[RMDB]
RNA sequence: GGGAACGACUCGAGUAGAGUCGAAAAGAUAUGGACCCUAGGGCUCGAAGAACGAAAUAAUAGAGGCUUAUCGGAAACGAUAAGCUACCCACCUAUUAUUUCGGGAGAGCACUAGGGUCCUAAGUCACGUCAAGUAGAAGUUCGCUUCUACUUGACGAAAAGAAACAACAACAACAAC
Reactivity to DMS in 0.01 (KOAc 150mM, MgCl2 10mM, bicine 150mM(pH8.5), 24C), signal-to-noise 2, nucleotides 027 to 126: g000a040u000a220u040g000g000a020c000c000c000u030a000g020g030g020c020u000c000g020a120a130g000a230a260c020g010a000a010a000u010a000a000u000a020g000a210g020g000c000u000u000a010u000c000g000g000a030a050a040c000g020a020u000a000a000g040c000u000a010c070c040c030a300c120c000u000a010u010u000a000u000u010u000c010g020g050g000a170g000a020g010c000a020c000u000a020g010g010g000u000c000c000u000a000a030g010u000c000a300